[RMDB]
RNA sequence: GGGAACGACUCGAGUAGAGUCGAAAAUGUUCAGAAUGUGUGGCCAUACCUAUUUUGGCGUACUCAAAGAACACGUUUAACUGCUUGGAAUAUCUUUGAUACACGAUGCGCACCCAAUACAGGGUGUGCCAUAGAGCUGCUUCGGCAGCUCUAUGGCAAAAGAAACAACAACAACAAC
Reactivity to DMS in 0.01 (KOAc 150mM, MgCl2 10mM, bicine 150mM(pH8.5), 24C), signal-to-noise 2, nucleotides 027 to 126: u010g010u000u000c030a090g000a120a120u000g000u000g020u010g020g010c010c010a010u000a120c280c100u000a070u000u000u000u000g000g000c000g010u000a030c070u000c010a050a080a130g010a050a030c020a070c130g020u000u000u010a090a220c050u000g020c070u000u000g010g000a110a170u000a040u000c020u000u000u010g000a100u010a050c060a030c120g000a070u010g030c060g010c010a020c000c000c000a040a150u010a130c210a150g000g010g010u000g010u000
Reactivity to 2A3 in 0.01 (KOAc 150mM, MgCl2 10mM, bicine 150mM(pH8.5), 24C), signal-to-noise 2, nucleotides 027 to 126: u100g020u090u030c030a030g080a190a110u080g030u010g000u040g160g000c000c050a030u050a070c090c220u150a290u070u180u000u000g030g000c010g000u070a020c020u020c050a040a020a020g000a000a000c040a000c060g000u030u010u140a170a140c130u100g030c020u040u150g020g030a150a030u090a040u230c090u000u080u200g000a030u100a040c080a020c050g070a070u150g010c030g020c040a010c000c050c000a050a070u300a150c120a060g010g000g010u010g000u010

This 177-nucleotide RNA was probed chemically with DMS and 2A3. The RNA was probed in 150 mM KOAc, 10 mM MgCl2 and 150 mM bicine (pH 8.5) at 24 C. Reactivities are given for positions 27 through 126. 2A3 adducts were read by reverse transcription with SuperScript II with manganese. For DMS, 1,460 sequencing reads were counted. Source: RMDB library OK2TST, as collected in RNAgym. Reactivities are rounded to 0.1 and cut off at 0 and 3.